[RMDB]
RNA sequence: GGGAACGACUCGAGUAGAGUCGAAAAUAAAAUCGUAGGGCGAGACGAUCGACGAAAAUCGCUCAAACUACUCGAGACCAAAGGAAUACGCUUCGGUAACUCGCUCUAAUCCCGAGCGAUAAAUGAAACUUCAGUUGAUAUUCGUAUCAACUGAAGUAAAAGAAACAACAACAACAAC
Reactivity to DMS in 0.01 (KOAc 150mM, MgCl2 10mM, bicine 150mM(pH8.5), 24C), signal-to-noise 3, nucleotides 027 to 126: u020a050a090a070a160u000c030g020u000a090g000g000g000c050g000a030g010a040c030g000a020u000c020g000a060c070g010a100a060a050a100u000c100g030c110u000c070a050a060a220c030u010a010c010u000c010g000a030g010a110c020c040a080a070a100g010g020a150a120u020a050c090g000c040u010u010c130g010g000u000a070a130c080u000c010g000c000u000c000u010a080a170u000c110c010c020g020a020g020c020g000a090u000a010a050a090u000g010a120a100
Reactivity to 2A3 in 0.01 (KOAc 150mM, MgCl2 10mM, bicine 150mM(pH8.5), 24C), signal-to-noise 3, nucleotides 027 to 126: u030a000a040a010a040u050c010g000u010a010g000g020g000c010g000a010g010a040c020g010a080u090c020g030a060c060g090a090a010a000a090u100c080g030c070u030c090a040a050a020c000u010a000c000u000c000g010a020g020a050c030c000a030a080a060g140g040a180a080u130a210c020g010c050u060u090c020g000g010u010a030a060c020u000c010g000c000u000c010u010a040a070u050c040c000c000g000a000g010c020g020a010u130a020a120a060u140g080a130a040

An RNA of 177 nucleotides, treated with DMS and 2A3 and read out base by base. Source: RMDB library M2PK90, as collected in RNAgym. The RNA was probed in 150 mM KOAc, 10 mM MgCl2 and 150 mM bicine (pH 8.5) at 24 C. Reactivities are given for positions 27 through 126. For DMS, 3,088 sequencing reads were counted. Values are in units of 0.01, from 0 to 300, in steps of 10.